RNA sequence: GGGAACGACUCGAGUAGAGUCGAAAAAGGCACUAUGAGGCAUGUUUUGCAACUCAUCGGCAGAUGUAAAAAUGCCAGUUAAAUAUAACUGCAAAAAAUACAAACUCUUACGCUUUAGCUGCCUAAAAACCAGCUAGCGUGACUUCUUCAAGAUUGCCAUAGUUAAGGGCUUCGGCCCUUAACUAUGAAAAGAAACAACAACAACAAC
Reactivity to 2A3 in 0.01 (KOAc 150mM, MgCl2 10mM, bicine 150mM(pH8.5), 24C), signal-to-noise 1, nucleotides 027 to 156: a000g100g000c040a000c090u220a140u110g000a000g010g000c020a000u010g020u080u150u050u040g040c040a030a020c050u040c070a010u010c000g000g040c030a000g000a050u070g020u300a000a010a030a010a000u000g020c000c000a010g000u000u000a000a220a160u210a000u070a030a000c000u050g010c080a040a080a000a040a000a130u110a190c100a000a080a080c040u090c000u080u060a000c030g010c010u110u110u050a000g000c000u000g000c000c020u100a110a110a020a020a040c000c000a000g000c000u000a000g000c000g000u000g020a000c010u000u080c030u130u060c060a020a000g000a300u150u090g030c020